[RMDB]
RNA sequence: GGGAACGACUCGAGUAGAGUCGAAAAUGCAACCUGCUUUCGGAACUUUACCGUCUGCGGUACUUGUAGUGCUAUAUGAGCGUGGGCCCUCCGUGUGCGUGUAAUUUAAUUGAACUAGCACUCCGUUCACUAGCCUGAGCUUCGGCUCAGGCUAGUGAAAAGAAACAACAACAACAAC
Reactivity to 2A3 in 0.01 (KOAc 150mM, MgCl2 10mM, bicine 150mM(pH8.5), 24C), signal-to-noise 1, nucleotides 027 to 126: u130g000c000a050a080c000c000u030g000c000u010u000u010c010g020g110a080a080c160u000u130u110a010c020c000g000u000c010u000g010c000g000g000u000a030c050u000u040g070u140a010g060u000g110c140u010a050u000a030u300g050a090g090c000g050u090g000g010g000c000c010c000u100c000c000g030u020g010u000g000c140g120u000g000u030a120a090u000u180u130a050a070u030u030g090a150a120c000u100a000g080c030a030c040u020c000c000g010u000u000
The record gives the reactivity of an RNA of 177 nucleotides to 2A3. Conditions: 150 mM KOAc, 10 mM MgCl2 and 150 mM bicine (pH 8.5), 24 C.